[RMDB]
RNA sequence: GGGAACGACUCGAGUAGAGUCGAAAAUUGAGAGUUUGAUCCUGGCUCAGGACGAACGCUGGCGGCGUGCCUAAUACAUGCAAGUUGAGCGAUGAAGAUUGGUGCUUGCACCAAUUUGAAGAGCAGCGAACGGGUGAGUAACGCGUGGGGAAUCUGCCAUAGAAUGUACGUUCGCGUACAUUCUAUGAAAAGAAACAACAACAACAAC
Reactivity to DMS in 0.01 (KOAc 150mM, MgCl2 10mM, bicine 150mM(pH8.5), 24C), signal-to-noise 3, nucleotides 027 to 156: u000u000g010a090g020a060g010u000u000u010g010a110u000c010c020u000g030g010c060u000c030a130g030g020a090c040g000a050a070c030g010c040u010g010g010c050g000g020c030g020u000g010c020c030u000a090a120u000a070c040a050u010g030c030a070a140g030u020u010g010a090g020c050g010a140u010g010a140a090g000a050u000u000g010g000u000g010c040u010u000g060c000a020c000c010a000a010u000u000u000g010a140a090g010a120g010c030a100g000c050g030a070a090c050g000g000g020u010g020a090g020u010a070a090c030g000c080g040u000g000g000g010g000a070a130u000c020u000g000c270
Reactivity to 2A3 in 0.01 (KOAc 150mM, MgCl2 10mM, bicine 150mM(pH8.5), 24C), signal-to-noise 7, nucleotides 027 to 156: u140u130g050a070g010a010g060u050u040u100g150a230u040c020c020u060g110g070c080u080c100a020g000g020a010c010g010a050a010c040g000c060u040g030g010c030g020g020c040g030u070g010c000c010u080a100a030u120a090c060a020u090g050c040a080a000g010u020u110g050a020g030c030g020a050u070g050a060a040g010a030u010u020g000g000u010g000c050u090u120g000c010a000c000c000a000a000u030u020u030g030a050a030g020a010g000c030a000g020c000g030a040a030c050g030g020g020u050g020a060g020u070a080a040c060g010c040g060u080g000g000g000g000a010a070u000c020u040g020c010
Conditions: 150 mM KOAc, 10 mM MgCl2 and 150 mM bicine (pH 8.5), 24 C. Chemical mapping of a 207-nucleotide RNA with DMS and 2A3. The 2A3 profile rests on 7,203 reads. Source: RMDB library PDB130, as collected in RNAgym. The DMS profile rests on 11,707 reads.